[RMDB]
RNA sequence: GGGAACGACUCGAGUAGAGUCGAAAAGAUAUGGAGUGUGGCUUCUUUUGACGACGUCACCAUCGGAAACGAUGGAAGUCGUCGAUAAGAAGCACACUCCUAAGUCAAAGCAAGCUUCGGCUUGCAACCCAAUUUUACAGUUCGCUGUAAAAUUGGGAAAAGAAACAACAACAACAAC
Reactivity to 2A3 in 0.01 (KOAc 150mM, MgCl2 10mM, bicine 150mM(pH8.5), 24C), signal-to-noise 3, nucleotides 027 to 126: g030a020u070a040u210g000g000a020g020u010g010u100g280g300c020u000u010c010u000u030u020u040g010a020c010g000a000c010g070u190c090a050c130c000a000u000c000g010g050a100a090a020c030g000a000u000g000g000a030a010g000u000c000g000u000c000g000a000u040a010a010g000a010a000g010c000a000c000a000c000u010c000c000u010a000a000g000u010c040a030a060a080g010c010a000a000g000c000u070u290c300g160g000c000u000u050g000c010a000a010
Reactivity to DMS in 0.01 (KOAc 150mM, MgCl2 10mM, bicine 150mM(pH8.5), 24C), signal-to-noise 4, nucleotides 027 to 126: g010a050u010a300u000g000g000a020g010u000g020u010g010g020c000u000u000c000u000u010u010u000g000a010c010g020a010c010g000u000c300a100c000c000a010u010c000g000g000a200a120a230c020g000a010u000g010g010a080a110g000u000c000g010u000c000g020a010u000a010a000g000a010a000g000c000a020c000a000c010u000c000c000u000a000a070g000u010c040a140a150a200g000c010a030a000g000c000u000u010c200g050g020c010u000u000g010c000a050a080
The record gives the reactivity of an RNA of 177 nucleotides to 2A3 and DMS. DMS (dimethyl sulfate) methylates the pairing face of unpaired adenines and cytosines. The data come from the RNA Mapping Database (RMDB), library TTRDES. As a SHAPE reagent, 2A3 marks flexible, mostly unpaired nucleotides at the ribose 2'-OH. Reactivities are given for positions 27 through 126. The DMS profile rests on 4,253 reads. The 2A3 profile rests on 10,609 reads.